[RMDB]
RNA sequence: GGGAACGACUCGAGUAGAGUCGAAAAGCGAUACAACGGCAAUUCCACCAUUUAGUGCGUACCAUCCCUGGUCGUGGUCGGCUGAUCGUGAAUGGUGAGGAUCAACGUUUGGCCGAGGUCUUGGCGAGUGGAUUAUCAGUUUCGACUGAUAAUCCACAAAAGAAACAACAACAACAAC
Reactivity to DMS in 0.01 (KOAc 150mM, MgCl2 10mM, bicine 150mM(pH8.5), 24C), signal-to-noise 3, nucleotides 027 to 126: g040c060g000a080u040a040c090a050a040c050g000g020c100a090a060u010u010c000c000a030c020c010a060u010u000u020a040g020u000g010c010g020u010a070c010c020a040u020c090c020c060u010g000g020u010c070g020u010g000g000u000c030g000g000c020u040g000a050u000c080g000u000g000a010a040u000g000g000u000g000a070g000g010a040u000c110a090a170c070g000u000u000u010g010g010c010c000g000a080g000g010u020c060u010u020g000g010c050g000a150
Reactivity to 2A3 in 0.01 (KOAc 150mM, MgCl2 10mM, bicine 150mM(pH8.5), 24C), signal-to-noise 8, nucleotides 027 to 126: g030c020g030a070u090a150c080a100a020c060g070g020c060a010a030u060u000c010c010a020c010c010a020u030u060u090a130g040u090g130c030g060u100a030c010c000a030u100c010c010c040u070g070g010u050c050g030u040g030g040u040c020g020g060c030u070g050a120u120c060g050u060g070a030a060u060g030g020u040g020a140g040g010a040u040c060a070a070c060g020u010u050u090g080g000c010c010g010a030g000g050u010c030u100u090g060g010c050g030a030